Source information:
The record gives the reactivity of an RNA of 177 nucleotides to 2A3. The reactions ran in a buffer of 150 mM KOAc, 10 mM MgCl2 and 150 mM bicine (pH 8.5), at 24 C. For 2A3, 930 sequencing reads were counted. Reactivities are rounded to 0.1 and cut off at 0 and 3.

[RMDB]
RNA sequence: GGGAACGACUCGAGUAGAGUCGAAAAUCUCAGGUCUUCGGACCUGAGAAAAAUAAAAUAAGCUAAUCGUCAAAGCACUACACUGUACAUAAAGACGACAAAAAAGGACAAUCUUCGGAUUGUCCAAGCGUAAACCAAUGUUCGCAUUGGUUUACGCAAAAGAAACAACAACAACAAC
Reactivity to 2A3 in 0.01 (KOAc 150mM, MgCl2 10mM, bicine 150mM(pH8.5), 24C), signal-to-noise 1, nucleotides 027 to 126: u000c000u010c000a000g010g020u040c000u000u110c180g070g010a000c020c000u010g000a010g010a000a000a000a000a000u040a010a020a010a000u170a040a030g040c050u080a020a060u060c020g020u050c040a170a020a020g020c010a010c050u140a040c230a050c110u130g040u090a020c000a060u190a060a060a030g030a000c000g030a000c000a010a080a030a020a020a030g010g000a000c000a010a030u010c010u020u060c160g130g010a000u000u000g000u000c010c020a000a000